An RNA of 207 nucleotides, treated with DMS and 2A3 and read out base by base. DMS adducts were read by reverse transcription with MarathonRT.
RNA sequence: GGGAACGACUCGAGUAGAGUCGAAAAAGUGUUUUUACUAGACCUAGUAAAAAUACUACUUUAGAAUGUAUCAUAGACAUAUGAUACACAGCUUCAUAUGUCUAUGAGGCUGUGUGCAUUCUAAACAAUAGGUCUAUUGUUAAGUAGUAUUAACACACGAUGCAAGUAUGUUCGCAUACUUGCAUCGAAAAGAAACAACAACAACAAC
Reactivity to DMS in 0.01 (KOAc 150mM, MgCl2 10mM, bicine 150mM(pH8.5), 24C), signal-to-noise 2, nucleotides 027 to 156: a080g010u000g000u010u000u010u000u000a030c040u000a010g020a010c000c010u000a260g000u010a000a010a030a030a030u000a020c000u000a060c090u000u000u010a000g010a050a010u000g010u000a140u000c030a020u000a030g020a130c230a090u000a020u000g020a080u010a190c070a110c070a110g010c050u020u000c000a010u000a030u000g010u000c160u000a020u000g010a030g030g030c020u000g030u000g020u000g010c000a010u000u010c010u010a040a070a120c140a070a070u010a020g000g010u010c000u000a100u000u000g000u000u000a100a140g030u010a020g020u010a090u000u000a040a050c080a080c090a290
Reactivity to 2A3 in 0.01 (KOAc 150mM, MgCl2 10mM, bicine 150mM(pH8.5), 24C), signal-to-noise 2, nucleotides 027 to 156: a010g020u010g010u000u010u000u020u030a030c030u000a000g030a030c000c000u010a010g040u100a030a030a000a000a000u010a010c000u010a020c000u020u020u000a000g000a000a000u000g000u020a090u060c000a000u000a000g040a020c010a070u030a010u000g010a010u070a050c060a010c010a040g040c020u010u000c000a000u030a000u040g070u000c010u030a000u000g000a000g000g020c040u020g050u020g010u030g030c000a000u000u000c000u000a010a020a020c020a030a030u010a020g030g010u000c010u010a050u030u080g020u030u090a030a000g010u000a000g000u000a010u020u010a050a000c010a000c010a010

DMS (dimethyl sulfate) methylates the pairing face of unpaired adenines and cytosines.